Chemical mapping of a 177-nucleotide RNA with DMS. DMS adducts were read by reverse transcription with MarathonRT. Reactivities are given for positions 27 through 126. The data come from the RNA Mapping Database (RMDB), library OK2TST. The RNA was probed in 150 mM KOAc, 10 mM MgCl2 and 150 mM bicine (pH 8.5) at 24 C. For DMS, 754 sequencing reads were counted.
[RMDB]
RNA sequence: GGGAACGACUCGAGUAGAGUCGAAAAAUGUGAUUGAGGUUGCAAGAGAACUCAACAAUCUGGCAUCUGCGGCGGAAGGUGAAGAUGCCCUAGAGGACAGAUGUUUCGCUCUCGAAGCAAUUGCUGACGAUGGACUGGGUUUCGACCCAGUCCAUCGAAAAGAAACAACAACAACAAC
Reactivity to DMS in 0.01 (KOAc 150mM, MgCl2 10mM, bicine 150mM(pH8.5), 24C), signal-to-noise 1, nucleotides 027 to 126: a110u030g070u000g010a200u010u000g010a180g000g020u000u000g000c020a050a300g000a030g000a010a030c000u000c140a050a000c020a000a110u000c000u040g000g010c000a050u010c000u000g000c300g010g020c000g000g020a150a100g040g020u000g000a090a070g020a300u020g000c000c000c000u000a000g000a050g000g010a050c030a010g010a050u000g010u000u000u020c150g010c020u000c010u000c000g010a180a150g000c060a010a040u000u020g030c040u000g010a130